[RMDB]
RNA sequence: GGGAACGACUCGAGUAGAGUCGAAAAGAUAUGGAAACGAGAGGCUUUUGACGCUCGACGGAUCGGAAACGAUCCCAAGAGCGAUAAGCCUCCGUUUCCUAAGUCAAAAGCUUAGUUCGCUAAGCAACAAUGGCCUGUACUUCGGUACAGGCCAUUGAAAAGAAACAACAACAACAAC
Reactivity to DMS in 0.01 (KOAc 150mM, MgCl2 10mM, bicine 150mM(pH8.5), 24C), signal-to-noise 1, nucleotides 027 to 126: g020a000u000a300u000g030g020a000a000a010c030g000a210g000a020g020g010c000u010u000u000u020g060a270c110g010c000u000c000g000a300c300g000g010a000u010c030g050g000a200a080a280c010g010a000u000c000c000c010a000a300g000a000g010c010g010a090u000a000a020g010c000c000u000c010c010g000u000u000u000c000c000u000a000a100g000u010c000a130a090a130a160g000c000u000u000a000g030u010u000c300g030c010u010a010a010g020c000a300a280